[RMDB]
This 170-nucleotide RNA was probed chemically with DMS and 2A3. The reactions ran in a buffer of 150 mM KOAc, 10 mM MgCl2 and 150 mM bicine (pH 8.5), at 24 C. Source: RMDB library 15KLIB, as collected in RNAgym. For 2A3 the reverse transcriptase was SuperScript II with manganese.
RNA sequence: GGGAACGACUCGAGUAGAGUCGAAAAGCUAUUUUGGUGUCUUCUCUCUUUUGAACCUUAAGCUUAGAGCACCUAUGGGUGUCUAUGACUUUAAGGUCUCAACACAAGAGUUCAGAUUCAUGACUGCACACAUCUAGCUUCGGCUAGAUGAAAAGAAACAACAACAACAAC
Reactivity to DMS in 0.01 (KOAc 150mM, MgCl2 10mM, bicine 150mM(pH8.5), 24C), signal-to-noise 9, nucleotides 027 to 129: g030c040u030a030u000u050u020u060g070g000u050g030u030c000u050u040c010u000c020u000c070u010u020u020u010g030a030a030c010c020u000u000a040a000g020c020u000u020a030g000a120g040c030a030c000c000u000a140u130g050g020g050u010g000u000c010u040a000u010g030a150c000u040u030u050a010a000g000g010u000c080u000c010a050a040c300a040c250a060a020g000a000g000u010u010c040a020g000a100u030u030c040a000u010g040a070c080u000g010c070a080c120a090
Reactivity to 2A3 in 0.01 (KOAc 150mM, MgCl2 10mM, bicine 150mM(pH8.5), 24C), signal-to-noise 9, nucleotides 027 to 129: g030c020u040a110u120u190u090u110g080g010u050g030u030c010u300u090c010u000c000u010c010u020u110u010u030g020a020a010c000c000u000u000a010a000g010c000u000u010a000g010a020g040c000a000c000c010u050a220u300g230g000g000u000g010u000c000u000a020u020g150a300c010u050u060u080a000a000g000g000u010c010u000c030a010a020c070a000c020a040a010g010a010g020u070u070c040a020g010a050u050u050c030a040u130g090a070c060u050g010c040a020c010a000